This 177-nucleotide RNA was probed chemically with 2A3. The reactions ran in a buffer of 150 mM KOAc, 10 mM MgCl2 and 150 mM bicine (pH 8.5), at 24 C.
RNA sequence: GGGAACGACUCGAGUAGAGUCGAAAAAAGCAAUCUUAUUUGAUGUUGUAGGCUAUGAAGUUAAACCUCACUUUAUUACUACUGAAGAAUUAGCAAAUUAUAGUAAUAAUGAAACUGCUACUCCAAAACACACUCUCCGUUUCGACGGAGAGUGUGUAAAAGAAACAACAACAACAAC
Reactivity to 2A3 in 0.01 (KOAc 150mM, MgCl2 10mM, bicine 150mM(pH8.5), 24C), signal-to-noise 1, nucleotides 027 to 126: a000a000g040c080a090a000u150c040u220u300a300u150u100u100g140a180u030g040u140u000g000u060a000g000g040c000u010a000u050g220a300a000g040u180u250a130a130a130c000c070u000c000a000c000u010u000u000a000u000u000a000c000u000a000c070u240g010a060a000g060a200a300u180u140a000g010c010a030a030a000u040u000a000u000a040g000u040a000a040u080a020a000u130g070a050a050a050c010u100g000c000u000a010c010u000c000c000a000a000a040
For 2A3 the reverse transcriptase was SuperScript II with manganese.